Structure probing data (DMS and 2A3) for a 207-nucleotide construct. Conditions: 150 mM KOAc, 10 mM MgCl2 and 150 mM bicine (pH 8.5), 24 C. For DMS the reverse transcriptase was MarathonRT.
[RMDB]
RNA sequence: GGGAACGACUCGAGUAGAGUCGAAAAACGAUCUCGAUCGAGAUCGUGUACGUACGUACGAGUGUACGAUCUCACGUGAACGAUCACACUCGAGAGAGUACGAGUACGUUCUCUCGAGAGAGAACACACGAGUGAUCGAGUUCGAGUACUCGUGUUCUGAACAGAGCCAUUUCGAUGGCUCUGUUCAAAAAGAAACAACAACAACAAC
Reactivity to DMS in 0.01 (KOAc 150mM, MgCl2 10mM, bicine 150mM(pH8.5), 24C), signal-to-noise 1, nucleotides 027 to 156: a210c060g050a030u010c010u010c000g000a130u000c100g020a070g010a010u010c020g070u000g000u000a100c030g010u000a040c070g060u000a100c060g020a100g040u000g030u000a010c120g000a070u000c020u000c030a300c100g020u000g000a070a130c080g020a040u010c000a160c030a140c050u020c030g000a050g030a120g000a060g020u000a060c090g030a160g090u000a030c030g000u000u000c010u000c030u000c000g000a120g000a050g000a180g030a120a070c080a040c010a020c060g010a030g030u000g020a040u000c000g000a220g030u000u000c020g030a130g010u000a050c020u000c010g000u000g020u000u000c000
Reactivity to 2A3 in 0.01 (KOAc 150mM, MgCl2 10mM, bicine 150mM(pH8.5), 24C), signal-to-noise 1, nucleotides 027 to 156: a000c030g030a040u030c000u000c010g080a050u050c040g010a000g000a070u020c010g000u000g010u060a030c030g000u010a020c030g030u010a020c110g030a090g000u080g000u070a050c060g000a060u000c010u010c050a030c120g100u130g030a060a040c080g020a040u080c020a010c020a010c070u020c000g040a040g000a020g010a010g010u020a030c000g010a040g080u050a000c000g000u000u000c000u020c000u010c010g000a000g000a010g000a010g000a060a000c040a000c000a010c070g030a010g150u120g040a040u000c020g000a030g100u120u120c010g020a000g030u060a000c000u000c000g000u040g040u110u050c040